[RMDB]
RNA sequence: GGGAACGACUCGAGUAGAGUCGAAAAGUAUCCAUGUUCGCAUGGAUACGAAAUAUGCGCGCGUAUAUCCGGUUGGCUGGAUGCGCGCGUCAGGCUGGCCGGUGGUGCUAGUCUUCGGACUAGCAAACUUACGUACACUUUUCGAAGUGUACGUAAGAAAAGAAACAACAACAACAAC
Reactivity to 2A3 in 0.01 (KOAc 150mM, MgCl2 10mM, bicine 150mM(pH8.5), 24C), signal-to-noise 7, nucleotides 027 to 126: g000u000a000u000c000c000a000u000g020u020u070c260g000c110a000u000g000g010a000u000a000c000g000a020a010a000u240a070u110g000c000g000c000g000c000g040u030a110u020a050u230c020c020g000g080u150u200g240g080c070u060g120g010a010u010g000c010g000c000g000c000g000u000c000a000g010g020c020u050g020g010c020c020g030g040u080g040g070u060g010c000u000a000g010u000c000u010u040c190g060g000a000c000u000a000g000c000a020a010a040
Reactivity to DMS in 0.01 (KOAc 150mM, MgCl2 10mM, bicine 150mM(pH8.5), 24C), signal-to-noise 6, nucleotides 027 to 126: g000u000a000u000c000c000a010u000g010u000u010c230g030c000a010u010g000g000a010u000a000c000g000a050a060a080u000a060u010g010c020g000c000g000c000g010u000a050u010a130u000c000c000g010g010u010u010g020g020c020u000g010g010a030u000g000c000g000c000g000c010g000u000c060a060g000g010c030u000g000g010c030c020g010g010u000g020g020u000g010c000u000a000g000u000c000u000u000c180g030g010a010c000u000a010g010c010a040a060a140